[RMDB]
The data come from the RNA Mapping Database (RMDB), library M2PK50.
Structure probing data (DMS and 2A3) for a 177-nucleotide construct.
High 2A3 reactivity points to a flexible backbone, as in loops and unpaired stretches.
The 2A3 profile rests on 1,668 reads.
2A3 adducts were read by reverse transcription with SuperScript II with manganese.
The reactions ran in a buffer of 150 mM KOAc, 10 mM MgCl2 and 150 mM bicine (pH 8.5), at 24 C.
RNA sequence: GGGAACGACUCGAGUAGAGUCGAAAAGUUACACGCUUCGGCGUGUAACAAAUACUCAAACGGUCGCCGAAACGAGAGGACACUCUAGGAGGCAUCCAUGCAAAACCCAUUGCUUCGGCAAUGGGAAGCACAUUUGUAACUUCGGUUACAAAUGUGCAAAAGAAACAACAACAACAAC
Reactivity to DMS in 0.01 (KOAc 150mM, MgCl2 10mM, bicine 150mM(pH8.5), 24C), signal-to-noise 1, nucleotides 027 to 126: g000u000u000a010c000a000c000g000c020u010u030c100g050g020c000g040u000g000u010a000a000c040a000a070a110u000a070c000u000c000a080a140a200c190g020g000u030c080g000c030c000g000a080a160a060c080g000a060g000a050g000g000a100c300a120c010u000c010u010a050g000g000a260g020g040c000a070u020c000c040a090u010g010c140a150a030a090a130c000c000c000a050u010u010g000c000u000u020c210g010g000c000a000a000u000g000g000g000a020a010
Reactivity to 2A3 in 0.01 (KOAc 150mM, MgCl2 10mM, bicine 150mM(pH8.5), 24C), signal-to-noise 1, nucleotides 027 to 126: g000u000u000a000c020a000c000g030c010u040u060c170g130g020c000g010u000g000u000a000a000c000a000a000a000u030a010c000u020c000a100a040a040c150g000g030u020c040g010c010c000g030a090a030a090c060g010a010g010a010g100g040a070c060a070c190u050c000u010a050g060g030a000g000g000c010a000u000c090c020a040u130g060c040a000a040a110a230c020c000c000a000u000u010g000c000u010u020c190g090g000c000a000a000u000g000g010g000a000a000